[RMDB]
RNA sequence: GGGAACGACUCGAGUAGAGUCGAAAACGUAGGGGCUUCUGUCGUAGGAGAGAUGGCGCCAAAUGCAAUCAUAUUGGUUUGGUACUAAUUAUGGUAGAAUUAAAGCUAAGCCAAUUUGGGCACCGGGCACUGUUUACGUGUUCGCACGUAAACAGUGAAAAGAAACAACAACAACAAC
Reactivity to 2A3 in 0.01 (KOAc 150mM, MgCl2 10mM, bicine 150mM(pH8.5), 24C), signal-to-noise 1, nucleotides 027 to 126: c050g060u060a050g060g010g010g040c030u030u050c020u040g120u110c050g050u080a010g000g210a040g000a020g010a040u050g040g010c070g130c030c020a030a110a000u100g010c010a000a090u090c010a040u030a060u070u000g040g030u000u020u000g000g070u070a030c050u050a060a020u160u020a080u210g250g040u120a040g170a130a020u040u040a020a020a040g000c040u070a010a010g000c010c030a020a020u050u060u010g010g020g000c000a010c040c000g000g040g000
Reactivity to DMS in 0.01 (KOAc 150mM, MgCl2 10mM, bicine 150mM(pH8.5), 24C), signal-to-noise 2, nucleotides 027 to 126: c140g020u010a110g040g000g010g010c080u000u010c050u020g010u000c050g010u020a140g010g000a090g030a110g000a080u000g010g030c050g000c030c070a040a070a110u000g020c030a130a120u010c080a030u010a210u010u000g010g000u000u000u000g010g010u000a110c300u000a000a020u000u000a050u000g030g030u000a070g010a020a030u000u000a000a150a300g010c000u000a000a020g020c010c020a010a010u000u010u000g000g000g010c030a080c050c020g020g000g000
Structure probing data (2A3 and DMS) for a 177-nucleotide construct. The 2A3 profile rests on 1,010 reads. The reactions ran in a buffer of 150 mM KOAc, 10 mM MgCl2 and 150 mM bicine (pH 8.5), at 24 C.